[RMDB]
Chemical mapping of a 177-nucleotide RNA with DMS and 2A3. Values are in units of 0.01, from 0 to 300, in steps of 10. The RNA was probed in 150 mM KOAc, 10 mM MgCl2 and 150 mM bicine (pH 8.5) at 24 C. Source: RMDB library OK1LIB, as collected in RNAgym. For 2A3 the reverse transcriptase was SuperScript II with manganese. For DMS, 3,989 sequencing reads were counted.
RNA sequence: GGGAACGACUCGAGUAGAGUCGAAAACAUAGAGAAGUUAUUUACUAACAGAAUAAAUAAAUGGUAAUAAAUGAGGAACUAGACUCGGUGCCAAAUGUGUUCAACCGGGUGAACGCAACGCAACGCGAUACCCAUGGAGUUUCGACUCCAUGGGUAUAAAAGAAACAACAACAACAAC
Reactivity to DMS in 0.01 (KOAc 150mM, MgCl2 10mM, bicine 150mM(pH8.5), 24C), signal-to-noise 3, nucleotides 027 to 126: c040a120u020a050g000a050g000a050a230g000u000u000a060u020u010u020a010c010u020a050a100c090a120g000a050a200u020a100a150a080u050a080a150a100u040g010g000u000a000a020u000a040a020a030u000g000a020g000g020a140a060c020u000a020g000a140c050u010c020g000g000u000g000c040c060a030a130a070u040g000u020g000u000u000c020a030a120c040c020g010g000g010u010g000a010a030c000g000c000a010a040c200g010c060a010a110c080g000c120g000
Reactivity to 2A3 in 0.01 (KOAc 150mM, MgCl2 10mM, bicine 150mM(pH8.5), 24C), signal-to-noise 4, nucleotides 027 to 126: c060a060u110a040g030a020g020a080a010g020u000u010a160u090u100u100a050c010u040a050a070c030a050g230a190a090u170a160a090a040u150a010a070a100u180g010g010u030a040a050u060a120a270a070u070g020a040g010g030a130a030c030u000a020g040a060c000u010c020g000g000u020g010c000c010a030a180a170u150g070u050g040u090u090c000a030a010c010c050g000g000g010u010g020a010a020c030g000c020a030a020c070g010c140a040a070c060g020c000g030